[RMDB]
RNA sequence: GGGAACGACUCGAGUAGAGUCGAAAAGAAGUGAAUACCGUGGUUACGCUGACGGUCAAUUACCGCGUGCAUUGCACGGUGAAUGUGGAGAAGAAGACCGUUGUCACGACAGUAGUUAGAAAGAGUAACAUGCAUUAGUGUUCGCACUAAUGCAUGUAAAAGAAACAACAACAACAAC
Reactivity to DMS in 0.01 (KOAc 150mM, MgCl2 10mM, bicine 150mM(pH8.5), 24C), signal-to-noise 9, nucleotides 027 to 126: g010a110a120g020u000g010a100a060u000a040c040c020g020u010g000g010u010u000a070c130g010c110u000g020a040c020g010g000u000c020a060a200u000u000a070c010c010g000c020g030u000g020c030a110u000u010g010c070a030c050g010g010u010g010a060a040u000g020u000g010g010a250g000a080a040g010a120a110g000a040c010c010g010u000u000g010u000c040a070c060g010a070c050a060g000u000a050g000u010u000a060g010a060a080a070g000a100g010u000a090
Reactivity to 2A3 in 0.01 (KOAc 150mM, MgCl2 10mM, bicine 150mM(pH8.5), 24C), signal-to-noise 8, nucleotides 027 to 126: g070a080a000g100u120g070a080a030u050a080c000c010g030u030g020g050u100u080a030c050g020c140u100g040a020c000g010g000u010c010a020a070u060u050a040c010c020g070c020g030u020g000c060a210u080u290g020c040a010c050g030g030u060g030a040a050u160g030u140g030g050a140g010a140a000g040a060a020g000a010c000c000g000u010u060g020u020c020a010c030g070a010c030a030g070u100a010g030u070u090a060g090a120a140a000g070a010g040u050a040